[RMDB]
RNA sequence: GGGAACGACUCGAGUAGAGUCGAAAACGACCUGUACGAGUGCGUACAGGUCGAAGCGAGUGGUGACACUCGCAAGCACGUCAACUAUAAGCGCCCAUUAUAGUACAAACACAUAAAGCCCCGAUAUGUGUAGACGUGCAAGGGCGAACGGGGCAAAACCCCGAUUUAUAUUCGUAUAAAUCGGGGUAAAAGAAACAACAACAACAAC
Reactivity to 2A3 in 0.01 (KOAc 150mM, MgCl2 10mM, bicine 150mM(pH8.5), 24C), signal-to-noise 3, nucleotides 027 to 156: c000g010a000c000c000u000g000u000a010c000g060a110g300u240g300c070g010u010a000c000a000g030g010u000c000g000a000a000g000c000g000a000g000u000g010g020u020g020a010c000a000c010u000c000g000c000a000a000g010c000a000c000g010u000c010a020a010c020u010a010u020a040a040g060c050g170c080c020c020a000u030u010a010u000a010g020u050a080c050a040a180a000c000a010c000a000u020a010a060a020g000c000c000c000c010g010a010u000a010u040g000u000g000u010a040g000a010c000g000u000g000c020a050a110g130g010g040c100g020a150a020c010g000g010g010g000c010a030a000a000
Reactivity to DMS in 0.01 (KOAc 150mM, MgCl2 10mM, bicine 150mM(pH8.5), 24C), signal-to-noise 1, nucleotides 027 to 156: c020g010a000c000c010u000g010u000a020c020g000a300g020u000g020c130g050u020a010c020a020g000g000u000c000g000a000a020g020c010g010a060g040u020g000g010u030g000a190c000a050c000u000c010g030c000a050a130g000c000a020c000g000u000c020a300a070c000u000a010u000a010a010g020c100g050c130c130c080a300u000u000a020u000a040g010u000a070c080a110a190a150c010a000c010a010u000a040a140a170g010c000c000c000c000g020a300u010a020u000g050u000g000u000a060g020a000c020g000u000g000c030a030a030g000g000g000c090g000a070a050c000g000g040g040g020c040a020a010a070
Conditions: 150 mM KOAc, 10 mM MgCl2 and 150 mM bicine (pH 8.5), 24 C.
Structure probing data (2A3 and DMS) for a 207-nucleotide construct.
For DMS the reverse transcriptase was MarathonRT.